[RMDB]
RNA sequence: GGGAACGACUCGAGUAGAGUCGAAAAGAUACUCUGGCUUAUUAUGCUCACAGCGUGUUGUACAGAGUUUUUCCUUAUGACAUGGAUUCUGGUGUGUCAUCCUUUAGUGAACUACUUUUUGAUUGCGGCACUUUCCCCUUCGGGGGAAAGAAAAGAAACAACAACAACAAC
Reactivity to 2A3 in 0.01 (KOAc 150mM, MgCl2 10mM, bicine 150mM(pH8.5), 24C), signal-to-noise 4, nucleotides 027 to 129: g020a000u050a020c000u000c000u000g000g020c010u080u070a050u180u070a010u280g020c010u050c090a160c040a040g010c010g010u060g000u020u070g030u050a160c000a020g010a000g020u040u000u000u030u000c000c000u030u100a150u090g020a010c020a030u070g090g030a100u200u060c050u100g070g010u080g020u010g010u040c010a020u060c000c030u060u080u070a110g010u070g090a080a050c020u040a040c020u070u090u080u040u100g110a160u070u060g060c000g020g010c050a010
Reactivity to DMS in 0.01 (KOAc 150mM, MgCl2 10mM, bicine 150mM(pH8.5), 24C), signal-to-noise 4, nucleotides 027 to 129: g020a050u020a040c020u020c020u000g010g060c090u040u000a050u080u060a000u070g000c000u010c240a190c300a150g050c020g030u010g040u040u020g030u000a110c000a000g020a060g070u000u000u000u000u000c000c000u040u050a080u060g020a000c060a040u000g000g000a100u000u000c090u090g010g020u040g010u020g010u000c040a000u060c090c020u020u020u010a060g040u000g020a100a080c080u010a060c080u000u000u000u000u000g010a070u000u010g050c060g020g070c060a110
About this RNA
Structure probing data (2A3 and DMS) for a 170-nucleotide construct. The DMS profile rests on 15,847 reads. Reactivities are given for positions 27 through 129. The 2A3 profile rests on 8,717 reads.